[RMDB]
RNA sequence: GGGAACGACUCGAGUAGAGUCGAAAAAUUGAUUUGAGACGUCGCCUUGCAGUGUUAACUUGGCUCUCAUGAUCCUCUUUGAUCUUCCACAAAGGGUAGGCUACGGGUGAAACCUCUUAGGCUAAAACCAUAACUUACUCUUCGGAGUAAGUUAUGGAAAAGAAACAACAACAACAAC
Reactivity to DMS in 0.01 (KOAc 150mM, MgCl2 10mM, bicine 150mM(pH8.5), 24C), signal-to-noise 5, nucleotides 027 to 126: a050u010u000g010a080u000u010u000g000a090g010a070c150g020u010c070g010c020c020u000u020g010c080a090g010u000g020u000u000a060a070c070u000u000g000g010c020u000c010u000c030a050u000g000a080u000c050c030u000c030u000u010u010g010a080u000c090u000u010c030c060a150c040a020a060a070g010g000g010u000a060g000g010c020u000a060c160g000g010g000u000g000a080a070a140c060c010u000c060u010u000a080g010g010c060u010a040a060a090a120
Reactivity to 2A3 in 0.01 (KOAc 150mM, MgCl2 10mM, bicine 150mM(pH8.5), 24C), signal-to-noise 4, nucleotides 027 to 126: a000u090u090g030a040u080u030u130g070a050g010a020c060g050u070c040g020c010c000u030u070g030c060a070g020u030g040u260u110a050a070c020u050u060g030g000c000u020c010u000c020a030u070g040a050u030c010c030u020c040u050u020u040g060a070u030c020u140u000c050c000a040c010a060a100a010g090g020g020u030a040g040g040c010u030a010c070g070g000g000u070g060a070a040a050c000c000u000c040u080u070a050g050g010c010u040a020a010a020a110